[RMDB]
RNA sequence: GGGAACGACUCGAGUAGAGUCGAAAAGAUAUGGACCCGUACCAGCAACAGCUCGGAAACGAGACAUGCUGUGUACAGGGUCCUAAGUCAAAACUUUUAACUCCCGGUUCGCCGGGAGUUAAAAGAACGAAGAUAUUAGGUUCGCCUAAUAUCUUCGAAAAGAAACAACAACAACAAC
Reactivity to 2A3 in 0.01 (KOAc 150mM, MgCl2 10mM, bicine 150mM(pH8.5), 24C), signal-to-noise 2, nucleotides 027 to 126: g010a020u040a040u140g000g010a000c010c000c000g010u000a000c000c000a000g030c010a000a080c030a250g060c010u010c000g080g000a090a070a040c010g000a000g040a020c000a040u060g010c000u010g100u100g010u140a010c020a020g000g000g000u000c000c000u000a020a010g000u010c010a020a040a150a210c010u000u000u010u020a000a000c010u000c000c000c020g040g050u050u040c260g040c060c020g000g020g000a000g000u000u000a000a000a010a000g000a010a000
Reactivity to DMS in 0.01 (KOAc 150mM, MgCl2 10mM, bicine 150mM(pH8.5), 24C), signal-to-noise 4, nucleotides 027 to 126: g000a040u000a300u000g010g000a000c000c000c000g010u010a000c000c000a010g000c000a020a090c250a190g010c000u010c010g000g000a080a120a180c000g000a000g020a040c050a190u000g010c000u000g000u010g010u000a000c000a090g040g000g000u000c000c000u000a010a070g000u010c030a080a100a130a180c010u000u000u000u000a010a010c000u000c000c010c000g000g020u000u020c230g040c010c020g010g010g010a000g000u000u000a000a000a000a000g000a060a150
Chemical mapping of a 177-nucleotide RNA with 2A3 and DMS. The reactions ran in a buffer of 150 mM KOAc, 10 mM MgCl2 and 150 mM bicine (pH 8.5), at 24 C. The DMS profile rests on 3,929 reads. Reactivities are given for positions 27 through 126.